[RMDB]
RNA sequence: GGGAACGACUCGAGUAGAGUCGAAAAUUCAAACGCACCUGUCCUUGCUCAAGUGCUGGGAUUGUGUGCCAACGGCUAUGAUAGAUAUGAAUAGAGCACGAGAUAAUGUGCUUACAGAAAGUUGGUUAAUUAUAGUUAGGUUCGCCUAACUAUAAUUAAAAGAAACAACAACAACAAC
Reactivity to 2A3 in 0.01 (KOAc 150mM, MgCl2 10mM, bicine 150mM(pH8.5), 24C), signal-to-noise 6, nucleotides 027 to 126: u040u010c010a040a040a030c030g000c010a000c000c020u010g000u000c000c000u000u010g020c020u060c160a300a140g160u080g160c000u010g010g000g020a010u000u030g060u020g000u000g100c000c010a050a010c010g060g000c040u100a070u210g070a080u100a150g080a050u100a050u220g110a110a070u060a090g030a000g030c000a000c020g070a090g030a200u190a190a050u180g000u000g010c010u000u040a040c020a030g190a080a130a010g030u030u060g040g030u030u030
Reactivity to DMS in 0.01 (KOAc 150mM, MgCl2 10mM, bicine 150mM(pH8.5), 24C), signal-to-noise 5, nucleotides 027 to 126: u010u000c050a040a140a150c210g010c010a000c030c060u000g010u000c000c010u000u000g000c020u000c190a140a160g010u010g010c000u000g010g010g000a020u000u000g010u010g020u010g000c010c080a040a060c080g000g010c060u000a070u000g010a140u000a070g010a120u010a080u000g010a110a090u000a120g010a020g020c000a010c010g010a110g010a120u020a070a090u010g010u000g010c000u000u000a090c140a070g010a080a060a090g010u000u000g000g000u000u000
Source: RMDB library RFMREP, as collected in RNAgym. Chemical mapping of a 177-nucleotide RNA with 2A3 and DMS. 2A3 adducts were read by reverse transcription with SuperScript II with manganese. Values cover nucleotides 27 to 126. For 2A3, 5,896 sequencing reads were counted.